Notes
Source: RMDB library OK3TST, as collected in RNAgym. An RNA of 207 nucleotides, treated with 2A3 and DMS and read out base by base. Reactivities are given for positions 27 through 156. For DMS, 1,285 sequencing reads were counted. The 2A3 profile rests on 1,007 reads. Conditions: 150 mM KOAc, 10 mM MgCl2 and 150 mM bicine (pH 8.5), 24 C. DMS adducts were read by reverse transcription with MarathonRT.
[RMDB]
RNA sequence: GGGAACGACUCGAGUAGAGUCGAAAAGCUGUAGAAGAUGCAUCAACAGUCAAACUGACUUCAAAGAAAAGAUUUCCAUUACCUGAAGUAAACAUACAGGAAGUCCUAUCAACACAUAACUUGUAUAAAGGUUUUGAGACAAGAGGAAGAGAGAAAACAACCCUUACGUUUUCGAACGUAAGGGUUGAAAAGAAACAACAACAACAAC
Reactivity to 2A3 in 0.01 (KOAc 150mM, MgCl2 10mM, bicine 150mM(pH8.5), 24C), signal-to-noise 2, nucleotides 027 to 156: g010c040u000g000u030a020g010a140a010g070a080u090g060c040a040u050c070a020a070c010a010g050u060c030a080a110a180c100u060g010a020c000u020u050c020a020a080a140g070a030a070a030a010g020a030u060u070u040c030c010a040u020u070a080c020c050u000g030a020a000g020u070a040a110a040c050a050u120a010c050a020g000g000a020a020g040u000c000c000u130a100u130c090a020a080c010a030c010a080u100a160a080c050u040u020g080u070a130u060a090a090a070g050g000u040u040u050u150g040a040g020a020c010a070a020g000a000g050g040a050a000g040a000g010a010g030a010a080a020a020
Reactivity to DMS in 0.01 (KOAc 150mM, MgCl2 10mM, bicine 150mM(pH8.5), 24C), signal-to-noise 1, nucleotides 027 to 156: g000c020u000g040u010a050g040a100a110g000a100u000g060c030a160u000c080a180a080c010a030g060u030c060a020a010a150c060u030g000a040c050u000u000c010a060a080a240g010a100a060a050a110g000a090u000u000u000c030c000a200u000u000a020c010c030u000g010a130a180g010u000a070a080a190c080a160u010a100c040a150g000g000a080a080g000u000c030c030u000a180u000c030a150a040c010a030c080a030u010a010a140c030u000u000g010u010a130u000a070a030a130g000g030u010u000u000u000g030a100g000a050c050a130a140g000a120g010g040a050a120g000a140g000a040g000a120a030a040a140